Chemical mapping of a 170-nucleotide RNA with 2A3 and DMS. The 2A3 profile rests on 40,070 reads.
RNA sequence: GGGAACGACUCGAGUAGAGUCGAAAAAUAGGAGGGGAUGCUAGGAGUCGGCGGCGACCGAAGCGAGGGGGAAAGUAAAGAGAGCAACGGGGCUAGCGAGUGGAUGUUCCGCCUCCCCAGGGUCCCGAGGGAAGAGGGUUCGCCCUCUUCAAAAGAAACAACAACAACAAC
Reactivity to 2A3 in 0.01 (KOAc 150mM, MgCl2 10mM, bicine 150mM(pH8.5), 24C), signal-to-noise 9, nucleotides 027 to 129: a010u170a030g020g030a030g010g020g000g020a010u080g030c030u040a030g020g040a060g050u060c030g020g000c010g020g020c040g070a070c000c010g020a040a010g030c050g020a050g020g010g000g000g000a020a020a010g040u090a010a030a030g050a010g000a000g010c010a020a070c040g020g000g020g010c030u040a040g040c020g040a020g030u120g030g030a060u080g090u140u030c020c010g020c010c020u040c010c000c000c000a010g070g000g010u010c000c000c020g010a050g030g060
Reactivity to DMS in 0.01 (KOAc 150mM, MgCl2 10mM, bicine 150mM(pH8.5), 24C), signal-to-noise 9, nucleotides 027 to 129: a080u050a080g000g000a060g000g020g020g000a060u010g020c090u010a080g030g020a070g030u000c110g000g020c150g010g000c080g000a060c040c050g030a110a070g010c100g000a070g000g020g020g030g040a000a030a050g000u030a010a020a040g000a060g000a070g000c030a090a100c080g030g000g000g050c120u010a080g030c060g000a060g010u040g000g030a030u000g030u000u010c050c020g020c030c030u010c020c010c020c000a100g000g010g000u030c040c030c020g000a070g020g010